An RNA of 177 nucleotides, treated with 2A3 and read out base by base. Source: RMDB library TTRDES, as collected in RNAgym. Conditions: 150 mM KOAc, 10 mM MgCl2 and 150 mM bicine (pH 8.5), 24 C.

[RMDB]
RNA sequence: GGGAACGACUCGAGUAGAGUCGAAAAGAUAUGGAGACGUGUAGGGAGUGCCACAUCGGAAACGAUGUGAAGCACAUCGAUCUACCGUCUCCUAAGUCAAAUCUCUCAUACUUCGGUAUGAGAGAAAGAACCUAUUAGCGUUCGCGCUAAUAGGUUCAAAAGAAACAACAACAACAAC
Reactivity to 2A3 in 0.01 (KOAc 150mM, MgCl2 10mM, bicine 150mM(pH8.5), 24C), signal-to-noise 1, nucleotides 027 to 126: g000a000u000a000u040g000g020a000g010a000c040g090u120g020u240a010g020g020g000a060g000u020g020c000c000a020c020a010u000c010g000g000a020a010a000c010g000a000u000g010u000g020a070a050g090c000a010c000a020u300c070g010a030u010c000u010a010c000c020g010u030c000u000c000c000u020a000a000g000u000c000a000a110a130u030c000u000c000u000c000a000u000a010c000u050u080c300g160g000u010a010u000g000a000g040a000g020a000a010a000